[RMDB]
RNA sequence: GGGAACGACUCGAGUAGAGUCGAAAAGGUGAAUGGAUGGACGCCUCGCAGUUGGAGGGCGUUAUCUGGUCAGACGGUGAACUGAAUGGCAACGAAUUAUCACUGGAAACAGCAGAGUUGCUGCGAGUAUGUCUCGCAUGUUCGCAUGCGAGACAUAAAAAGAAACAACAACAACAAC
Reactivity to 2A3 in 0.01 (KOAc 150mM, MgCl2 10mM, bicine 150mM(pH8.5), 24C), signal-to-noise 1, nucleotides 027 to 126: g140g050u120g060a020a080u130g030g020a000u050g040g080a000c010g030c000c000u030c020g110c100a170g090u240u300g210g020a130g050g000g030c020g010u000u010a020u010c000u050g020g040u060c010a030g010a070c040g000g010u040g040a020a030c020u020g050a040a080u100g040g000c000a040a030c030g040a030a000u130u050a050u170c060a010c080u000g020g100a010a160a060c030a030g000c020a010g030a010g150u070u000g000c000u020g000c000g000a030g130
Reactivity to DMS in 0.01 (KOAc 150mM, MgCl2 10mM, bicine 150mM(pH8.5), 24C), signal-to-noise 3, nucleotides 027 to 126: g030g020u000g010a100a100u010g010g010a030u000g010g010a030c030g010c000c020u010c100g020c120a110g010u000u000g010g020a140g000g010g020c030g020u000u000a010u000c000u000g010g000u010c020a050g000a110c060g010g000u000g010a050a110c110u000g010a110a090u000g000g000c040a050a030c050g010a050a110u010u000a180u000c040a100c040u000g010g010a140a090a160c090a040g010c090a070g000a180g010u000u000g000c010u000g010c070g000a120g040